Record summary
The record gives the reactivity of an RNA of 207 nucleotides to DMS and 2A3. Source: RMDB library OK3TST, as collected in RNAgym. For DMS the reverse transcriptase was MarathonRT. The RNA was probed in 150 mM KOAc, 10 mM MgCl2 and 150 mM bicine (pH 8.5) at 24 C.

RNA sequence: GGGAACGACUCGAGUAGAGUCGAAAAUUAAAAACUAAGACACAAAUCCACACGUUAGCCUUGGCCUACGCGGGGUCAGGAUAUUCAAUACCAUUGUCUUUCACCUCUGCAUCUCGUCCCACUGGAAGGUCUUCAGGGGCAGUAACAUGCGUGGAGAAAUGCAUGCAUAGUUCGCUAUGCAUGCAUUAAAAGAAACAACAACAACAAC
Reactivity to DMS in 0.01 (KOAc 150mM, MgCl2 10mM, bicine 150mM(pH8.5), 24C), signal-to-noise 2, nucleotides 027 to 156: u000u000a030a050a040a090a120c050u000a030a040g010a100c050a060c050a060a050a140u000c010c010a020c030a010c040g000u000u020a070g010c000c020u000u000g030g020c000c000u010a070c060g060c090g000g000g040g010u000c080a070g040g000a070u000a010u000u000c040a130a090u000a100c060c040a190u000u000g000u000c030u000u010u010c020a120c030c000u000c020u010g010c050a100u010c040u050c050g000u000c000c000c010a170c110u000g040g040a070a040g020g020u000c050u010u000c030a110g000g020g000g040c050a070g000u000a040a050c080a060u000g020c040g040u000g020g010a150g000a100
Reactivity to 2A3 in 0.01 (KOAc 150mM, MgCl2 10mM, bicine 150mM(pH8.5), 24C), signal-to-noise 4, nucleotides 027 to 156: u110u050a000a030a030a000a060c110u100a080a020g140a030c040a010c030a120a190a080u050c060c000a040c010a010c090g040u050u090a060g010c010c020u040u090g020g000c000c000u120a080c070g010c050g050g040g010g000u010c010a030g000g050a040u030a050u160u140c080a100a050u080a220c040c040a060u070u060g050u020c010u010u090u110c090a040c020c040u110c060u150g040c010a070u010c030u070c080g040u060c040c020c020a160c050u010g060g070a060a030g050g040u020c020u120u060c130a010g020g030g000g000c010a040g060u060a020a050c040a030u080g030c050g040u030g000g000a020g070a020